[RMDB]
RNA sequence: GGGAACGACUCGAGUAGAGUCGAAAAACGCCGCCGGGAAGGUGUGGAAAUUCCGGUACUCCUACUGGAACAGCAGCCAGAGCUACGUGCUCACCAAGGGGUGGAGCCGCUUCGUCAAGGAGAAGGGCAAUCAGCACUAUUUCGAUAGUGCUGAUUGAAAAGAAACAACAACAACAAC
Reactivity to DMS in 0.01 (KOAc 150mM, MgCl2 10mM, bicine 150mM(pH8.5), 24C), signal-to-noise 7, nucleotides 027 to 126: a110c110g020c040c040g000c030c020g000g000g010a090a050g010g020u000g020u000g010g000a080a120a210u000u000c010c000g020g010u000a060c100u000c100c080u010a110c040u000g000g000a050a080c080a080g010c070a110g000c010c040a090g000a070g000c020u000a070c130g020u010g010c010u010c020a150c060c070a120a100g010g000g000g020u000g010g000a120g010c020c040g000c060u000u000c060g010u010c120a090a070g010g010a070g000a090a050g000g000g000
Reactivity to 2A3 in 0.01 (KOAc 150mM, MgCl2 10mM, bicine 150mM(pH8.5), 24C), signal-to-noise 4, nucleotides 027 to 126: a000c030g040c030c010g000c020c010g020g020g050a050a030g060g020u110g040u110g140g040a110a080a030u070u000c020c000g010g000u030a060c060u040c040c040u020a050c020u030g020g040a050a040c000a050g040c020a020g040c000c040a020g010a000g000c020u060a070c190g140u230g020c010u000c010a040c020c020a080a140g060g000g010g040u060g000g020a000g030c020c010g020c050u040u050c020g100u040c060a040a080g060g010a050g040a030a060g020g000g000
This 177-nucleotide RNA was probed chemically with DMS and 2A3. For DMS, 8,629 sequencing reads were counted. Source: RMDB library OK2TRN, as collected in RNAgym.